Chemical mapping of a 177-nucleotide RNA with DMS and 2A3. For DMS the reverse transcriptase was MarathonRT. For 2A3, 1,623 sequencing reads were counted.
[RMDB]
RNA sequence: GGGAACGACUCGAGUAGAGUCGAAAACUCCGCUUUUAGCCUCUUUACAGUGCUGCCUUGUCUAAUCAUGUUCAAGCAGCAUUGUACAGGGCUAUGACAGCGUAGAAAACAGACGGUUCGCCGUCUGGCAACUCCAAUUGUUCGCAAUUGGAGUUGCAAAAGAAACAACAACAACAAC
Reactivity to DMS in 0.01 (KOAc 150mM, MgCl2 10mM, bicine 150mM(pH8.5), 24C), signal-to-noise 1, nucleotides 027 to 126: c000u000c030c020g010c020u000u000u000u000a000g010c000c000u020c020u000u010u000a020c000a000g020u000g010c000u000g000c170c050u010u020g010u000c000u000a110a100u050c300a100u000g020u000u000c020a000a000g020c000a020g000c000a030u000u000g000u000a010c070a050g000g000g010c000u000a010u010g000a080c230a040g010c020g000u000a060g000a070a060a120a270c000a020g000a010c000g040g020u000u030c300g010c010c000g020u000c000u000g030
Reactivity to 2A3 in 0.01 (KOAc 150mM, MgCl2 10mM, bicine 150mM(pH8.5), 24C), signal-to-noise 1, nucleotides 027 to 126: c000u020c020c020g000c000u010u100u030u020a010g000c010c010u190c000u100u000u030a000c000a010g010u000g010c000u000g030c030c040u020u010g000u030c040u100a160a210u170c080a160u200g070u240u040c010a000a010g000c010a010g000c000a010u000u010g000u000a000c000a010g000g000g000c000u010a010u000g070a020c050a020g000c000g060u070a010g130a080a170a010a020c010a000g000a020c000g000g030u010u060c120g050c040c000g000u030c000u000g010

For DMS, 869 sequencing reads were counted. For 2A3 the reverse transcriptase was SuperScript II with manganese. The RNA was probed in 150 mM KOAc, 10 mM MgCl2 and 150 mM bicine (pH 8.5) at 24 C.